Record summary
Structure probing data (DMS and 2A3) for a 207-nucleotide construct. DMS (dimethyl sulfate) methylates the pairing face of unpaired adenines and cytosines. The DMS profile rests on 1,987 reads. Source: RMDB library OK3TST, as collected in RNAgym.
RNA sequence: GGGAACGACUCGAGUAGAGUCGAAAAAGGCGUGAGCCACUGUGCCCAGCCUUGUGUACAGGCUUUUAUGUGGACAUGUUUUCAAUUCUCUUGGGUAUAUAUCUAGCAGUGGAAUGUCUGGGUCAUAUGAUAACACGAGGCCUGACGUUUUGAAGAAGUCUUCCAAAAGAUUCGUCUUUUGGAAGACAAAAGAAACAACAACAACAAC
Reactivity to DMS in 0.01 (KOAc 150mM, MgCl2 10mM, bicine 150mM(pH8.5), 24C), signal-to-noise 1, nucleotides 027 to 156: a110g010g060c000g000u000g020a220g030c010c020a110c110u010g000u020g020c020c000c050a120g000c030c020u000u010g030u000g000u000a090c020a070g030g000c070u000u030u000u000a030u020g030u010g030g060a050c090a050u000g020u010u030u030u000c110a030a090u000u000c080u010c080u010u020g000g060g000u020a070u020a080u000a120u010c040u000a160g010c040a070g060u000g000g000a050a030u020g010u000c000u010g050g010g060u000c030a200u030a100u010g000a190u020a050a170c080a040c050g000a070g000g010c000c010u000g020a060c040g030u000u000u000u000g000a070a130g020a090a300
Reactivity to 2A3 in 0.01 (KOAc 150mM, MgCl2 10mM, bicine 150mM(pH8.5), 24C), signal-to-noise 2, nucleotides 027 to 156: a030g050g000c080g030u080g010a030g000c000c010a030c030u110g020u060g000c000c010c010a030g000c020c010u030u040g000u010g010u060a070c030a070g000g000c000u040u050u050u040a100u090g070u060g040g010a010c030a050u040g070u050u100u070u040c110a140a070u150u000c090u060c000u070u090g070g020g070u120a150u010a040u040a020u240c090u060a010g030c040a030g000u050g020g050a040a030u050g030u040c030u090g000g000g040u040c000a020u050a030u250g160a130u150a190a040c060a000c120g020a010g000g000c020c000u010g030a020c000g020u010u020u110u170g040a060a060g000a100a040